[RMDB]
RNA sequence: GGGAACGACUCGAGUAGAGUCGAAAACGCUCCCCUCGGCGGGCCGUCCGUUGGGUUCACACCCCCAGGCCGCGGGCCGGCUGCUCUUCUUUCUCUUUCGUCGUCAUCCUUGGCUAACCGCUCAAGUACCCAGAGUUGUUCGCAACUCUGAAAAGAAACAACAACAACAAC
Reactivity to DMS in 0.01 (KOAc 150mM, MgCl2 10mM, bicine 150mM(pH8.5), 24C), signal-to-noise 9, nucleotides 027 to 129: c160g000c090u030c000c000c000c010u000c100g030g040c000g000g000g000c060c030g010u010c020c020g010u000u090g030g020g010u050u040c140a090c120a300c090c000c010c070c040a140g000g000c040c030g000c030g020g030g050c040c050g020g020c050u000g000c060u020c060u020u030c040u020u050u020c020u000c050u010u000u020c040g050u020c040g000u000c040a080u000c060c020u000u000g000g020c050u040a080a090c060c050g000c080u040c060a020a070g020u050a110c060c030
Reactivity to 2A3 in 0.01 (KOAc 150mM, MgCl2 10mM, bicine 150mM(pH8.5), 24C), signal-to-noise 9, nucleotides 027 to 129: c050g020c040u040c000c010c000c000u040c030g050g010c020g010g030g020c030c020g030u040c010c000g040u090u220g100g010g000u200u170c090a100c020a080c070c010c000c010c010a030g040g010c010c000g040c030g000g030g010c060c040g010g000c030u040g020c010u020c000u070u020c000u020u110u010c030u000c000u020u060u030c030g030u010c010g030u020c020a080u050c030c000u020u030g010g000c000u020a070a060c030c010g020c010u060c050a040a040g040u050a070c010c010
Notes: This 170-nucleotide RNA was probed chemically with DMS and 2A3. For DMS the reverse transcriptase was MarathonRT. The reactions ran in a buffer of 150 mM KOAc, 10 mM MgCl2 and 150 mM bicine (pH 8.5), at 24 C.